An RNA of 177 nucleotides, treated with 2A3 and read out base by base. It was measured as part of the RMDB library RFM100. The RNA was probed in 150 mM KOAc, 10 mM MgCl2 and 150 mM bicine (pH 8.5) at 24 C.
RNA sequence: GGGAACGACUCGAGUAGAGUCGAAAAACGGCUCCGUCACUUACGAGUGACGGAGCCGAGGUGAGCGUAACGUCUCGCUGUCACCUGAGUGGGGGUCGUCCGUUGGUGGCAGGAGAAUCGCGCUUAAGACUACCUGAACGUUCGCGUUCAGGUAGUCAAAAGAAACAACAACAACAAC
Reactivity to 2A3 in 0.01 (KOAc 150mM, MgCl2 10mM, bicine 150mM(pH8.5), 24C), signal-to-noise 1, nucleotides 027 to 126: a000c050g020g000c000u000c000c000g040u000c000a040c000u000u040a020c290g230a080g000u000g040a000c000g010g020a000g020c000c000g000a000g040g050u100g040a000g040c030g000u000a010a040c080g020u010c000u010c020g280c130u000g000u060c050a050c000c000u090g120a190g190u300g020g050g080g020g110u290c150g160u050c090c040g030u020u010g000g000u000g000g030c020a000g000g020a010g000a000a020u020c050g000c000g000c000u000u000a000a130